[RMDB]
RNA sequence: GGGAACGACUCGAGUAGAGUCGAAAACACAUUCUAUUCGUAGAAUGUGGAACGUAGAGAGAACGACAGCGUCGCAGCUAUGUCGAACGAGGAAGAGCGCGCAGGGAUCGGGCUUCGGCCCGAUCAACCCUGUCAGUAAGUUCGCUUACUGACAGGGAAAAGAAACAACAACAACAAC
Reactivity to 2A3 in 0.01 (KOAc 150mM, MgCl2 10mM, bicine 150mM(pH8.5), 24C), signal-to-noise 2, nucleotides 027 to 126: c010a000c000a000u000u000c000u000a030u030u090c180g100u000a000g000a000a000u010g020u010g020g020a050a010c020g090u170a030g050a010g010a000g020a180a000c020g030a020c030a040g010c030g060u150c090g010c080a070g020c020u100a070u200g040u050c010g010a060a030c020g000a040g030g050a060a060g010a030g050c050g010c030g020c040a030g120g050g020a000u010c010g000g000g000c000u030u060c200g080g000c010c020c020g000a000u000c010a000a000
Reactivity to DMS in 0.01 (KOAc 150mM, MgCl2 10mM, bicine 150mM(pH8.5), 24C), signal-to-noise 5, nucleotides 027 to 126: c000a000c000a000u000u000c000u000a030u000u010c170g020u000a010g010a020a000u000g020u000g010g010a070a080c110g000u000a090g010a100g000a120g010a070a140c040g010a040c050a040g000c050g020u000c170g020c120a090g000c020u000a080u010g010u000c030g010a050a110c080g000a100g000g010a050a020g000a050g020c030g010c080g010c100a080g000g010g000a020u000c000g020g010g010c000u000u010c200g030g000c000c000c000g000a010u000c020a060a120
Structure probing data (2A3 and DMS) for a 177-nucleotide construct.
Reactivities are given for positions 27 through 126.
The 2A3 profile rests on 4,775 reads.
2A3 adducts were read by reverse transcription with SuperScript II with manganese.
DMS adducts were read by reverse transcription with MarathonRT.
The RNA was probed in 150 mM KOAc, 10 mM MgCl2 and 150 mM bicine (pH 8.5) at 24 C.